[RMDB]
Structure probing data (2A3) for a 207-nucleotide construct.
Reactivities are given for positions 27 through 156.
Conditions: 150 mM KOAc, 10 mM MgCl2 and 150 mM bicine (pH 8.5), 24 C.
For 2A3 the reverse transcriptase was SuperScript II with manganese.
It was measured as part of the RMDB library RNAMAK.
RNA sequence: GGGAACGACUCGAGUAGAGUCGAAAAGCGUACUACCUCCGAGGUAAGCGAGGAUACGAUUCUAUCCCAAAUAGGAUAGAACAGUAUCUACCCACCGCUUACUCCCCACCGGAGGUAUCGCAAAAACGCUUCGUUUGAUUCGUCAAACGAAGCGUAAGACAAACUCACGGUUCGCCGUGAGUUUGUCAAAAGAAACAACAACAACAAC
Reactivity to 2A3 in 0.01 (KOAc 150mM, MgCl2 10mM, bicine 150mM(pH8.5), 24C), signal-to-noise 1, nucleotides 027 to 156: g010c010g060u150a090c000u000a000c000c000u000c000c000g000a000g050g020u000a000a000g000c000g000a000g000g010a000u000a000c060g010a020u000u030c000u000a020u050c010c010c030a060a100a200u230a100g000g000a000u010a010g000a000a000c060a080g000u010a010u000c000u050a040c070c060c000a050c020c000g000c000u000u000a000c020u100c040c040c010c000a080c050c000g010g010a000g030g010u010a010u020c000g000c000a000a150a050a000a000c000g030c000u000u000c000g060u010u000u000g090a080u080u100c140g010u000c130a050a000a000c080g010a010a000g030c070g000u100a000a000